[RMDB]
This 177-nucleotide RNA was probed chemically with 2A3 and DMS.
RNA sequence: GGGAACGACUCGAGUAGAGUCGAAAACGCGGAAGUUGUCAUAGUGUUGCUGCGCCAGCAGCGUAGUCGGCACCAGUACCGCUACUUGUUUAUGGUUUUCCACUGCCAGGAACGCGGCGCGCAUCGCCGAGGGACUCCUGUUCGCAGGAGUCCCUCGAAAAGAAACAACAACAACAAC
Reactivity to 2A3 in 0.01 (KOAc 150mM, MgCl2 10mM, bicine 150mM(pH8.5), 24C), signal-to-noise 2, nucleotides 027 to 126: c120g020c080g020g020a000a140g020u010u070g040u100c020a250u240a120g050u090g010u140u030g000c120u030g000c000g020c000c000a100g030c020a020g000c050g050u000a000g050u050c140g010g010c040a070c090c070a100g140u200a070c000c000g000c020u000a070c000u060u160g110u100u030u040a200u130g000g020u060u040u060u070c070c060a070c050u040g040c050c010a040g030g080a020a010c040g050c070g010g020c010g000c000g000c000a040u010c000g000c020
Reactivity to DMS in 0.01 (KOAc 150mM, MgCl2 10mM, bicine 150mM(pH8.5), 24C), signal-to-noise 2, nucleotides 027 to 126: c050g020c120g010g020a100a170g000u010u000g000u000c050a160u000a110g010u000g040u000u000g000c110u000g040c080g000c000c070a180g150c120a190g010c010g040u000a030g000u030c000g050g000c080a050c180c190a080g000u000a120c060c010g000c010u010a000c090u000u020g030u000u000u000a100u040g000g020u000u000u000u020c000c080a120c130u000g000c020c020a050g000g010a010a070c070g010c000g010g000c060g010c040g030c080a030u020c000g010c020
The 2A3 profile rests on 790 reads. The DMS profile rests on 1,705 reads. It was measured as part of the RMDB library OK1LIB.